[RMDB]
RNA sequence: GGGAACGACUCGAGUAGAGUCGAAAAGCUGCGUGAAACCUCGCUGUUUUCUUGGCUAACUUUCAGCGAGGUGAGGCCAGGCGGCAAAAAAAAGUUGGGAGCAGCAACGGCAAGCAAAAAAAAAGUUACAAGUUGCGAUGGUUCGCCAUCGCAACAACUUAGUGGAUUACUUCGGUAAUCCACUAAGAAAAGAAACAACAACAACAAC
Reactivity to 2A3 in 0.01 (KOAc 150mM, MgCl2 10mM, bicine 150mM(pH8.5), 24C), signal-to-noise 2, nucleotides 027 to 156: g010c010u000g010c030g060u050g060a110a020a030c000c000u010c000g000c010u000g010u010u000u010u000c040u140u170g200g000c150u010a000a000c000u000u000u000c010a000g000c000g000a010g000g000u020g000a000g000g000c030c010a040g070g010c060g020g020c070a040a000a040a000a000a030a070a040g090u090u080g040g010g010a070g010c050a000g020c020a070a050c040g050g000c030a030a050g000c020a020a140a020a000a000a000a000a000a000g010u030u010a000c020a070a120g000u010u000g000c010g000a000u000g000g060u020u080c150g060c110c020a010u000c000g000c000a000a000c000a010a000

This 207-nucleotide RNA was probed chemically with 2A3. The reactions ran in a buffer of 150 mM KOAc, 10 mM MgCl2 and 150 mM bicine (pH 8.5), at 24 C.